This 207-nucleotide RNA was probed chemically with 2A3 and DMS.
Reactivities are given for positions 27 through 156.
The 2A3 profile rests on 564 reads.
[RMDB]
RNA sequence: GGGAACGACUCGAGUAGAGUCGAAAACACUUUGCUGGGCUGUGUCUCAGCAGAGACGAGAAUGACUGUUUUCAAGCCUGUUUCCUGGGUUGUUAAGUGGAGACAAUGGAUACAAGGCAGGUUGCCGAGUGAGUCAGAUGAGACAGUGUAGACAGCACUCAUGCAUGAGUUUCGACUCAUGCAUGAGAAAAGAAACAACAACAACAAC
Reactivity to 2A3 in 0.01 (KOAc 150mM, MgCl2 10mM, bicine 150mM(pH8.5), 24C), signal-to-noise 1, nucleotides 027 to 156: c030a000c000u010u000u000g030c000u000g000g080g000c090u150g130u170g050u300c030u000c010a000g000c000a000g000a000g040a000c060g040a010g080a170a110u130g030a030c080u040g080u060u010u140u210c030a050a070g090c010c060u050g000u010u020u080c000c000u060g050g160g000u060u000g030u060u060a010a150g030u040g060g030a060g000a020c030a070a100u090g020g020a000u010a010c020a050a040g000g100c030a040g000g100u020u070g020c030c020g000a000g030u040g020a040g010u090c010a000g070a060u070g020a000g020a030c020a020g000u020g010u030a020g000a090c010a030g040c070a030
Reactivity to DMS in 0.01 (KOAc 150mM, MgCl2 10mM, bicine 150mM(pH8.5), 24C), signal-to-noise 1, nucleotides 027 to 156: c030a070c000u000u000u000g000c000u010g000g030g000c000u000g000u000g030u040c000u000c000a050g000c000a010g030a010g000a120c060g040a190g000a160a110u010g010a060c010u010g000u000u000u000u000c040a010a110g010c000c010u000g070u000u000u000c010c000u010g040g000g050u000u000g000u000u000a040a110g020u010g030g000a240g020a040c060a090a150u000g000g010a190u020a070c020a090a140g000g010c030a060g000g000u000u000g000c050c020g000a050g010u000g000a070g040u000c050a090g000a090u000g000a190g020a050c070a050g050u000g010u000a110g000a100c050a100g030c040a270

The reactions ran in a buffer of 150 mM KOAc, 10 mM MgCl2 and 150 mM bicine (pH 8.5), at 24 C. Reactivities are rounded to 0.1 and cut off at 0 and 3.